About this RNA: This 177-nucleotide RNA was probed chemically with DMS and 2A3. Values cover nucleotides 27 to 126. The DMS profile rests on 2,241 reads. The RNA was probed in 150 mM KOAc, 10 mM MgCl2 and 150 mM bicine (pH 8.5) at 24 C.
RNA sequence: GGGAACGACUCGAGUAGAGUCGAAAAACGAGUGAGGCUUAUCCCGGGGAACUCGGCAAAUCGUCCCCACAUAGCAGCUCCCAGGACCCCCUUCCAAAAUGAUCCGAGGGGGGUGGCUUAGAACGCACAAACUAAUAGGGUUCGCCCUAUUAGUUUGAAAAGAAACAACAACAACAAC
Reactivity to DMS in 0.01 (KOAc 150mM, MgCl2 10mM, bicine 150mM(pH8.5), 24C), signal-to-noise 3, nucleotides 027 to 126: a050c060g010a050g010u000g020a090g010g000c050u010u000a120u000c020c020c020g020g010g000g010a170a040c040u000c030g000g020c130a050a090a130u000c080g000u000c010c010c000c070a100c150a070u010a080g000c060a090g000c050u000c010c000c010a100g000g000a080c000c000c000c010c000u000u000c020c070a040a060a120a110u010g000a090u010c160c190g000a030g020g030g020g010g010g020u000g000g000c000u010u000a100g010a070a080c150g000c090a230
Reactivity to 2A3 in 0.01 (KOAc 150mM, MgCl2 10mM, bicine 150mM(pH8.5), 24C), signal-to-noise 1, nucleotides 027 to 126: a010c010g020a020g020u040g020a050g050g000c010u060u110a050u130c090c010c000g000g020g010g020a090a040c040u020c080g040g000c080a090a040a110u140c050g020u010c010c000c020c000a010c010a040u170a010g030c030a000g010c020u000c000c020c010a010g050g040a000c010c000c000c000c000u000u000c020c010a000a050a140a260u190g040a040u080c100c020g000a010g000g040g000g010g000g020u000g000g010c000u020u010a040g060a100a020c030g030c030a030